The record gives the reactivity of an RNA of 177 nucleotides to DMS and 2A3. The 2A3 profile rests on 2,628 reads. Values cover nucleotides 27 to 126. As a SHAPE reagent, 2A3 marks flexible, mostly unpaired nucleotides at the ribose 2'-OH. 2A3 adducts were read by reverse transcription with SuperScript II with manganese. Conditions: 150 mM KOAc, 10 mM MgCl2 and 150 mM bicine (pH 8.5), 24 C.

[RMDB]
RNA sequence: GGGAACGACUCGAGUAGAGUCGAAAACACACUCCCUUCGGGGAGUGUGAAAGAACGCGUGGGACACGCAAGGAGGAGCCUGUGGGACGCGACAAACCCAAAAAAGUGGAUAGUUCGCUAUCCACAACGCGGUAUAUAACUUCGGUUAUAUACCGCGAAAAGAAACAACAACAACAAC
Reactivity to DMS in 0.01 (KOAc 150mM, MgCl2 10mM, bicine 150mM(pH8.5), 24C), signal-to-noise 2, nucleotides 027 to 126: c010a010c000a000c000u020c010c000c030u000u030c230g050g000g000g000a020g020u000g070u000g000a020a070a050g010a090a130c100g030c070g000u000g090g040g000a090c020a010c150g020c030a100a070g000g020a200g020g010a140g010c010c030u000g020u010g040g000g070a030c010g010c010g000a080c080a060a100a160c010c010c000a000a050a010a040a100a040g000u010g010g000a010u000a000g030u000u000c260g030c010u000a000u000c000c020a020c000a010a120
Reactivity to 2A3 in 0.01 (KOAc 150mM, MgCl2 10mM, bicine 150mM(pH8.5), 24C), signal-to-noise 1, nucleotides 027 to 126: c000a000c000a000c010u030c010c010c000u020u050c220g050g000g000g010a010g000u000g000u000g000a010a000a010g040a110a010c030g000c030g010u020g010g190g040a010c020a010c070g050c060a060a060g110g070a050g040g030a040g040c000c020u000g030u030g020g080g030a000c010g000c020g000a030c050a030a080a070c000c000c000a050a100a020a020a000a020g010u030g000g000a000u010a000g000u050u010c160g000c080u020a000u000c000c010a010c010a000a010